[RMDB]
RNA sequence: GGGAACGACUCGAGUAGAGUCGAAAAAUCCGUGGAUAUCGGGUGCGCACCGCUCCUCCUCCGGCUGUUCUCCUUCACAGCUAUGAACCAUGCGCCGCACAGGCAGUGUCCCGCUUCGUGUGCAAAAAAAACCGCCAGUACUUCGGUACUGGCGGAACUAGGACUAAUCGUUCGCGAUUAGUCCUAGAAAAGAAACAACAACAACAAC
Reactivity to 2A3 in 0.01 (KOAc 150mM, MgCl2 10mM, bicine 150mM(pH8.5), 24C), signal-to-noise 1, nucleotides 027 to 156: a010u060c030c010g030u030g030g020a050u020a040u300c050g040g010g000u060g000c070g010c020a000c040c020g010c080u050c000c010u000c000c010u080c050c040g050g000c000u030g010u010u060c100u020c040c050u150u120c070a040c000a020g040c020u070a080u210g050a040a040c070c010a080u090g020c030g010c000c050g020c000a050c000a010g060g040c010a000g020u020g030u040c000c020c000g000c050u010u020c060g110u020g020u040g040c030a000a000a030a000a060a000a150a020c000c000g000c020c010a000g010u000a000c000u030u090c160g090g010u000a000c000u000g000g010c000g000g000a000a000
Structure probing data (2A3) for a 207-nucleotide construct. It was measured as part of the RMDB library M2RFPK. The reactions ran in a buffer of 150 mM KOAc, 10 mM MgCl2 and 150 mM bicine (pH 8.5), at 24 C.